Conditions: 150 mM KOAc, 10 mM MgCl2 and 150 mM bicine (pH 8.5), 24 C.
An RNA of 177 nucleotides, treated with 2A3 and DMS and read out base by base.
For 2A3, 5,713 sequencing reads were counted.
The data come from the RNA Mapping Database (RMDB), library M2PK50.
RNA sequence: GGGAACGACUCGAGUAGAGUCGAAAAUCCGAAGAGUUCGCUCUUCGGAAAAGGGGUUCGAAACCCCCCCGAACCGCGGGUAGCGGCCCAAAAAUAAAAUAAAAAGCAUAGCGUUCGCGCUAUGCAACAUAAGUGAAUGGUUCGCCAUUCACUUAUGAAAAGAAACAACAACAACAAC
Reactivity to 2A3 in 0.01 (KOAc 150mM, MgCl2 10mM, bicine 150mM(pH8.5), 24C), signal-to-noise 3, nucleotides 027 to 126: u000c000c000g010a000a000g000a000g030u090u100c170g040c070u000c000u000u000c000g010g000a040a000a000a010g010g000g010g010u010u090c060g050a160a090a080c000c000c000c000c010c010c000g020a040a030c010c010g010c020g020g070g090u110a040g030c000g050g000c000c010c020a060a060a010a000a010u220a060a090a030a010u190a040a080a020a030a000g010c000a000u000a010g000c000g030u020u040c260g010c000g010c090u000a000u000g000c000a000a000
Reactivity to DMS in 0.01 (KOAc 150mM, MgCl2 10mM, bicine 150mM(pH8.5), 24C), signal-to-noise 3, nucleotides 027 to 126: u000c000c000g000a000a000g000a020g020u000u030c200g030c000u000c000u000u000c000g010g010a000a000a070a190g000g010g000g000u000u000c290g000a110a190a200c010c000c010c000c000c000c000g010a110a160c040c010g020c000g000g010g000u020a120g000c030g000g000c040c060c030a040a060a060a140a060u010a060a040a090a080u010a060a050a110a130a120g000c010a020u000a010g000c000g030u000u020c190g010c010g030c000u000a000u000g000c000a040a040